[RMDB]
RNA sequence: GGGAACGACUCGAGUAGAGUCGAAAAGAUAUGGAUCCCGUUAAGAGGUGCUCAAUAUGGCGAAUAUAUUCGGAAACGAAUAUAUAGCCAUAUUGAGCACUACCCACCUUAACCGGGAUCCUAAGUCCUACACUUGCUAGUUCGCUAGCAAGUGUAGAAAAGAAACAACAACAACAAC
Reactivity to DMS in 0.01 (KOAc 150mM, MgCl2 10mM, bicine 150mM(pH8.5), 24C), signal-to-noise 1, nucleotides 027 to 126: g000a110u020a300u000g000g020a020u000c020c000c030g020u000u000a010a010g030a230g000g020u000g030c000u020c000a020a000u010a000u000g000g010c000g030a200a160u000a010u000a030u000u000c000g060g000a130a070a250c010g000a000a040u010a010u000a000u000a300g030c000c000a000u000a030u000u000g000a070g000c000a000c000u000a020c160c030c270a300c080c000u000u000a000a000c160c130g050g000g000a000u000c000c000u010a010a120g000u000c020
This 177-nucleotide RNA was probed chemically with DMS. The reactions ran in a buffer of 150 mM KOAc, 10 mM MgCl2 and 150 mM bicine (pH 8.5), at 24 C. In probing experiments dimethyl sulfate is read out at A N1 and C N3, which are open when not base-paired.